[RMDB]
RNA sequence: GGGAACGACUCGAGUAGAGUCGAAAACUGUGGGUACAGAAACCACAAACUGAUCGGCUGACAAAAGGGGGAAGAGGCAAGGCAACUGGAAACCUUCGGGGACCAGUUCCCUCCACGCCCAGGUCUCUUCUCCCCAGCACAGCUCAGUCCAUAGCCACGGUAAAAUAAAUUUCGAUUUAUUUUACCGAAAAGAAACAACAACAACAAC
Reactivity to 2A3 in 0.01 (KOAc 150mM, MgCl2 10mM, bicine 150mM(pH8.5), 24C), signal-to-noise 4, nucleotides 027 to 156: c020u020g010u030g010g010g040u240a110c070a220g220a160a100a050c010c000a020c030a020a070a000c010u030g010a040u050c040g030g000c000u010g050a140c110a100a150a120a130g000g010g020g000g000a010a000g010a000g000g000c000a020a010g010g000c010a010a000c010u000g010g020a250a300a220c010c010u060u090c190g060g000g000g000a030c010c000a020g010u040u030c030c000c000u040c050c050a050c060g030c000c050c000a060g110g000u000c000u000c000u000u000c010u020c000c000c000c000a000g000c020a010c010a000g000c010u010c020a010g020u000c050c030a110u120a040g060c050c070a040
Reactivity to DMS in 0.01 (KOAc 150mM, MgCl2 10mM, bicine 150mM(pH8.5), 24C), signal-to-noise 1, nucleotides 027 to 156: c050u010g020u000g000g050g030u020a300c070a270g010a170a110a050c000c000a000c000a010a120a160c100u000g000a060u010c060g000g000c000u000g000a150c090a040a060a210a160g010g050g000g000g010a030a030g020a030g020g030c040a130a010g010g030c030a110a050c020u020g000g000a060a090a180c030c020u010u000c130g020g020g020g010a090c090c040a050g020u010u000c020c000c000u010c000c040a050c140g010c020c020c040a050g010g020u000c040u000c010u010u010c010u000c000c000c000c000a140g000c100a060c040a000g020c090u000c010a030g000u000c020c020a150u000a100g000c010c000a120